This 177-nucleotide RNA was probed chemically with DMS and 2A3.
The RNA was probed in 150 mM KOAc, 10 mM MgCl2 and 150 mM bicine (pH 8.5) at 24 C.
For DMS the reverse transcriptase was MarathonRT.
RNA sequence: GGGAACGACUCGAGUAGAGUCGAAAAUGCUGGAUGCCGUAGGGAUGUCGCGCUCAAAUCUGGAAAAGCGCUUUAAAGAUGAUAUUGGGCAGACUAUUCAUGGUGUUAUUCAUGAAGAGAAGCUCGACUUUAUCGACUGGUUCGCCAGUCGAUAAAGAAAAGAAACAACAACAACAAC
Reactivity to DMS in 0.01 (KOAc 150mM, MgCl2 10mM, bicine 150mM(pH8.5), 24C), signal-to-noise 3, nucleotides 027 to 126: u010g020c040u010g010g010a060u000g020c020c030g030u000a100g010g010g010a060u010g020u010c070g040c080g010c040u000c090a070a080a090u000c060u000g000g010a140a080a100a080g010c050g030c090u000u000u000a080a090a090g000a100u000g010a050u000a110u000u000g000g010g010c020a060g000a200c070u000a090u000u000c010a030u010g010g010u000g020u010u010a060u000u010c020a030u010g010a040a020g000a100g010a280a120g010c020u010c040g020a130
Reactivity to 2A3 in 0.01 (KOAc 150mM, MgCl2 10mM, bicine 150mM(pH8.5), 24C), signal-to-noise 2, nucleotides 027 to 126: u100g000c010u030g050g050a070u060g030c010c020g070u090a060g080g030g010a020u030g010u020c050g050c020g030c040u000c000a080a130a060u060c070u020g050g080a010a040a030a010g020c070g000c000u000u070u050a080a070a010g010a080u110g010a010u050a080u110u080g000g000g040c010a010g060a070c030u040a040u040u000c020a020u010g050g060u090g070u270u120a090u130u080c010a010u040g010a020a020g020a000g040a100a000g010c000u000c020g040a050